Structure probing data (2A3 and DMS) for a 170-nucleotide construct. It was measured as part of the RMDB library 15KLIB. Reactivities are given for positions 27 through 129. The DMS profile rests on 6,500 reads. High 2A3 reactivity points to a flexible backbone, as in loops and unpaired stretches. In probing experiments dimethyl sulfate is read out at A N1 and C N3, which are open when not base-paired.

[RMDB]
RNA sequence: GGGAACGACUCGAGUAGAGUCGAAAAUACUGCCAUGAUCCUACUGUUUUGCCUGGGGCUUUUGCGUACAGUCAGAUGAGGCCUCAUGUUCGUUACGACUUGUAUGAUGGUAACAUGUUUAUUAAAUAGGGGUAAGCCUUCGGGCUUACCAAAAGAAACAACAACAACAAC
Reactivity to 2A3 in 0.01 (KOAc 150mM, MgCl2 10mM, bicine 150mM(pH8.5), 24C), signal-to-noise 3, nucleotides 027 to 129: u060a030c040u060g020c040c020a030u090g040a000u030c000c000u020a070c050u030g040u120u050u050u100g010c020c020u010g000g010g040g000c000u010u050u070u070g070c020g020u130a090c020a130g110u090c030a030g030a140u060g050a080g020g000c000c000u040c010a000u060g010u060u100c010g010u010u060a030c060g060a070c040u100u040g040u010a070u120g020a030u050g050g100u080a030a000c000a040u010g040u030u070u050a200u060u130a110a060a050u170a080g000g000
Reactivity to DMS in 0.01 (KOAc 150mM, MgCl2 10mM, bicine 150mM(pH8.5), 24C), signal-to-noise 3, nucleotides 027 to 129: u050a140c120u030g010c000c040a170u000g000a040u020c030c010u020a080c100u000g000u000u010u010u050g000c100c030u030g030g000g010g090c000u010u030u040u000g030c110g010u050a190c130a060g000u000c030a120g000a070u030g090a040g030g000c090c070u030c060a020u020g010u000u040c130g030u060u010a080c060g040a140c110u030u020g080u010a000u010g010a120u070g040g050u000a050a040c060a000u050g040u020u060u010a060u110u010a050a090a130u020a070g020g040